[RMDB]
Chemical mapping of a 177-nucleotide RNA with 2A3 and DMS. For DMS the reverse transcriptase was MarathonRT. 2A3 adducts were read by reverse transcription with SuperScript II with manganese.

RNA sequence: GGGAACGACUCGAGUAGAGUCGAAAAUGUUGCAGCGAUUUUUGCACAACUUGAAGCCCUAGCAAAGGAAACAUCUCAGGCGGAGUUACUCGUGCAGCAAAUGAAUAUAUUAGAAAAAGCUUCAACACACAUCGUGCAAUUUCGAUUGCACGAUGUGAAAAGAAACAACAACAACAAC
Reactivity to 2A3 in 0.01 (KOAc 150mM, MgCl2 10mM, bicine 150mM(pH8.5), 24C), signal-to-noise 4, nucleotides 027 to 126: u090g020u000u030g030c040a030g010c040g070a140u030u000u050u110u170g030c000a010c000a030a050c010u020u090g130a140a060g020c000c000c000u000a020g000c090a050a100a140g090g060a050a090a110c110a240u090c030u060c100a020g040g000c010g020g000a030g020u070u080a060c080u050c090g010u010g030c010a010g030c030a020a050a100u070g110a060a010u210a010u070a100u240u180a090g140a020a130a010a000a000g030c010u010u020c020a030a020c030a020
Reactivity to DMS in 0.01 (KOAc 150mM, MgCl2 10mM, bicine 150mM(pH8.5), 24C), signal-to-noise 3, nucleotides 027 to 126: u010g010u000u000g000c090a040g000c010g020a100u010u040u000u050u000g020c000a130c000a080a050c050u010u000g000a160a090g000c020c020c050u020a100g000c060a110a100a070g010g000a050a050a130c080a120u030c180u020c100a180g020g010c060g000g000a050g000u020u010a070c180u000c120g000u010g000c010a110g000c090a030a060a080u030g000a110a040u030a120u010a020u020u000a130g030a070a040a050a120a150g010c000u000u010c020a050a040c070a090